[RMDB]
RNA sequence: GGGAACGACUCGAGUAGAGUCGAAAAGGGCUGCAUUCCAGGUAGCUCCCUGAUGCUGAACGGUGGCCGGCAGGUGCUCCAGCUUCCUGGCAUCCUGGCCCAAGCACACCUGGGGGCCGUGAGCCACCAGGCGUAAUGGAUUCGUCCAUUACGCCUGAAAAGAAACAACAACAACAAC
Reactivity to DMS in 0.01 (KOAc 150mM, MgCl2 10mM, bicine 150mM(pH8.5), 24C), signal-to-noise 9, nucleotides 027 to 126: g000g010g010c080u000g010c070a100u010u000c060c060a070g010g010u000a110g010c040u000c030c010c010u000g010a120u000g010c040u010g010a090a080c150g010g010u000g010g010c020c030g010g010c080a100g010g020u000g010c070u010c050c040a050g010c130u000u000c050c020u000g000g000c070a040u000c040c070u000g000g000c060c010c030a100a080g000c100a090c110a080c080c030u000g010g010g000g000g020c020c040g000u010g010a100g010c010c010a080c130
Reactivity to 2A3 in 0.01 (KOAc 150mM, MgCl2 10mM, bicine 150mM(pH8.5), 24C), signal-to-noise 9, nucleotides 027 to 126: g050g010g000c050u050g000c040a080u140u060c030c010a010g050g030u040a020g010c010u050c000c010c000u080g020a100u100g010c040u040g050a200a070c110g060g030u090g030g010c000c010g040g010c050a060g030g070u080g080c040u040c030c010a030g010c030u110u070c030c010u020g010g010c010a060u070c010c050u060g060g000c000c000c000a020a010g040c040a030c010a030c070c020u030g020g000g010g030g000c000c020g080u070g040a020g010c000c010a020c020
The record gives the reactivity of an RNA of 177 nucleotides to DMS and 2A3. High DMS reactivity at an A or C suggests that its Watson-Crick edge is free. Values are in units of 0.01, from 0 to 300, in steps of 10.